[RMDB]
RNA sequence: GGGAACGACUCGAGUAGAGUCGAAAAGAUAUGGAAUGGUUAUGGGAGCUGCUCGGAAACGAGGCAGCGAAGAACAUACCAUUCCUAAGUCAAAAGUCAGAAUGACGGUUCGCCGUCAUUCUGACAACAAUUAGCUAAUGUUCGCAUUAGCUAAUUGAAAAGAAACAACAACAACAAC
Reactivity to DMS in 0.01 (KOAc 150mM, MgCl2 10mM, bicine 150mM(pH8.5), 24C), signal-to-noise 7, nucleotides 027 to 126: g000a040u010a300u010g000g000a000a000u000g000g010u000u010a020u000g000g000g010a110g010c000u000g010c000u000c000g010g000a080a070a130c010g010a040g010g010c000a000g010c000g010a050a080g000a110a210c010a010u000a020c000c000a010u000u000c000c000u000a010a070g000u010c040a060a080a120a110g010u000c000a000g010a030a010u000g000a010c000g000g010u000u010c270g020c000c000g010u000c000a000u000u000c000u000g000a000c000a040a080
Reactivity to 2A3 in 0.01 (KOAc 150mM, MgCl2 10mM, bicine 150mM(pH8.5), 24C), signal-to-noise 7, nucleotides 027 to 126: g020a010u060a020u140g000g010a010a000u020g010g080u300u300a020u020g000g040g030a030g010c000u010g000c010u010c020g020g040a050a070a040c020g010a050g230g140c010a000g000c010g000a040a020g020a010a000c000a000u020a010c000c000a000u010u000c000c000u000a060a010g030u000c030a000a050a060a130g000u000c000a000g000a000a010u010g010a000c000g000g050u060u090c300g050c070c000g010u000c000a000u010u000c000u000g000a000c000a000a000
Background: This 177-nucleotide RNA was probed chemically with DMS and 2A3. For 2A3 the reverse transcriptase was SuperScript II with manganese. High 2A3 reactivity points to a flexible backbone, as in loops and unpaired stretches. Reactivities are given for positions 27 through 126. The reactions ran in a buffer of 150 mM KOAc, 10 mM MgCl2 and 150 mM bicine (pH 8.5), at 24 C.